[RMDB]
RNA sequence: GGGAACGACUCGAGUAGAGUCGAAAACUGAAUUCAAUUAUACAGAAAUAUGACAUGCCCAUGGCCUCUAAUCUUUAGAAAUAUAAAGGUCACAAAGUUGAAUAAAGACUGAGGAACUGUUCAGGACAACCUCAAGUAUUUUCGAAUACUUGAGGUUAAAAGAAACAACAACAACAAC
Reactivity to 2A3 in 0.01 (KOAc 150mM, MgCl2 10mM, bicine 150mM(pH8.5), 24C), signal-to-noise 1, nucleotides 027 to 126: c010u030g050a030a030u080u110c000a030a070u190u020a060u120a190c060a050g170a070a070a000u100a140u030g000a040c030a020u020g030c000c030c030a030u000g000g000c020c010u030c010u080a060a120u040c000u050u060u010a060g050a030a150a000u120a010u020a070a140a050g010g040u120c000a010c020a020a200a020g040u110u020g020a050a010u040a040a070a000g000a000c030u030g010a020g060g030a030a030c030u060g010u060u020c040a000g030g080a030c000
Reactivity to DMS in 0.01 (KOAc 150mM, MgCl2 10mM, bicine 150mM(pH8.5), 24C), signal-to-noise 3, nucleotides 027 to 126: c010u010g000a040a040u000u010c050a040a080u030u010a110u020a170c070a130g010a120a140a140u000a040u010g020a110c050a060u000g010c010c010c010a130u000g010g010c000c000u000c020u010a050a090u010c040u010u000u000a090g000a110a090a110u020a110u010a060a050a060g010g020u010c040a040c130a060a040a110g000u000u000g010a080a120u000a030a070a060g000a100c040u000g000a160g010g000a070a070c160u000g010u010u000c010a030g010g010a080c150